An RNA of 177 nucleotides, treated with 2A3 and DMS and read out base by base. The 2A3 profile rests on 1,204 reads.

[RMDB]
RNA sequence: GGGAACGACUCGAGUAGAGUCGAAAAAGAGUACGGUUUGAGCUGUUCCGAUGCUCUGCAUAAUCUUUUUUACAUCUCAGGUUUCAUUUCACAAUGCACGCAUGGAGUUGGAAGGAGUUCAACAGAACAGUAAUAAAUCCUUCGGGAUUUAUUACUGAAAAGAAACAACAACAACAAC
Reactivity to 2A3 in 0.01 (KOAc 150mM, MgCl2 10mM, bicine 150mM(pH8.5), 24C), signal-to-noise 2, nucleotides 027 to 126: a010g060a000g010u040a010c090g060g040u070u100u130g040a030g030c030u020g050u240u040c040c020g000a020u080g000c020u000c000u010g000c000a060u070a100a080u040c000u150u050u060u050u030u060a060c040a100u030c040u040c060a040g010g110u050u090u020c010a040u020u130u000c020a050c000a060a060u120g000c010a000c040g080c000a020u100g140g030a090g060u120u010g080g000a050a080g060g040a110g020u080u100c020a020a050c020a030g080a080a030
Reactivity to DMS in 0.01 (KOAc 150mM, MgCl2 10mM, bicine 150mM(pH8.5), 24C), signal-to-noise 7, nucleotides 027 to 126: a030g010a040g010u000a050c160g010g010u000u010u010g000a050g010c010u000g000u010u010c150c140g010a100u000g010c010u000c020u000g000c040a060u010a100a100u000c000u000u000u010u000u020u000a100c170a080u000c020u000c030a120g020g010u000u000u000c030a040u010u000u010c060a070c110a060a060u000g000c130a040c120g010c050a050u000g000g000a100g010u000u010g020g010a060a070g000g000a100g010u000u000c090a050a060c120a070g000a090a160